Conditions: 150 mM KOAc, 10 mM MgCl2 and 150 mM bicine (pH 8.5), 24 C. Chemical mapping of a 177-nucleotide RNA with DMS.

RNA sequence: GGGAACGACUCGAGUAGAGUCGAAAAGAUAUGGAGUACUAGAUUCGCGUGUACUAUCAACAGCGCUUGUCGGAAACGACAAGCGCUGUUGACGAAUACACGAACUACGAAUCUGUACUCCUAAGUCCGAGAAAGGAUACUUCGGUAUCCUUUCUCGAAAAGAAACAACAACAACAAC
Reactivity to DMS in 0.01 (KOAc 150mM, MgCl2 10mM, bicine 150mM(pH8.5), 24C), signal-to-noise 1, nucleotides 027 to 126: g000a090u030a300u020g000g000a030g000u000a000c000u020a020g020a010u010u010c000g000c000g040u000g000u010a030c040u020a210u010c000a000a010c010a010g010c000g030c000u030u010g000u010c000g020g000a140a120a190c010g020a010c010a030a000g030c000g050c000u000g000u000u000g000a000c100g020a050a120u000a010c000a000c000g010a050a100c170u100a300c010g000a030a000u000c000u010g000u000a030c010u000c000c000u000a000a120g020u000c040
It was measured as part of the RMDB library TTRINS. Reactivities are rounded to 0.1 and cut off at 0 and 3.